[RMDB]
RNA sequence: GGGAACGACUCGAGUAGAGUCGAAAACAUGUGUACUUCGGUACACAUGAAAUGACCGGCAUUAUUGGCUAAGGCUACACGGACGGCCGGGUCAAAUGCCGAAAAUCGUUGCGUUCGCGCAACGAAAGACUGAUUCCACGUUCGCGUGGAAUCAGUCAAAAGAAACAACAACAACAAC
Reactivity to 2A3 in 0.01 (KOAc 150mM, MgCl2 10mM, bicine 150mM(pH8.5), 24C), signal-to-noise 2, nucleotides 027 to 126: c010a010u000g000u010g000u010a000c000u020u050c190g120g020u000a000c000a000c010a000u010g000a030a040a000u100g050a020c050c020g000g010c000a030u030u040a130u160u110g010g000c030u080a140a250g020g000c000u060a060c190a030c190g300g080a050c090g000g030c000c000g030g000g000u000c000a000a000a000u010g000c000c020g040a060a010a000a040u010c000g000u000u020g020c020g000u000u040c290g000c010g000c040a010a000c000g010a020a000a010
Reactivity to DMS in 0.01 (KOAc 150mM, MgCl2 10mM, bicine 150mM(pH8.5), 24C), signal-to-noise 1, nucleotides 027 to 126: c000a050u000g010u000g020u010a000c000u000u020c250g040g010u000a000c000a000c010a000u000g000a040a070a090u000g000a110c130c010g010g000c030a040u000u000a170u000u000g010g020c000u000a090a160g010g000c000u010a110c070a160c100g020g020a130c220g000g020c010c010g000g050g010u000c010a010a060a010u000g000c000c000g060a010a000a040a050u000c010g040u000u000g030c000g010u000u020c290g020c000g010c000a000a000c000g000a010a070a080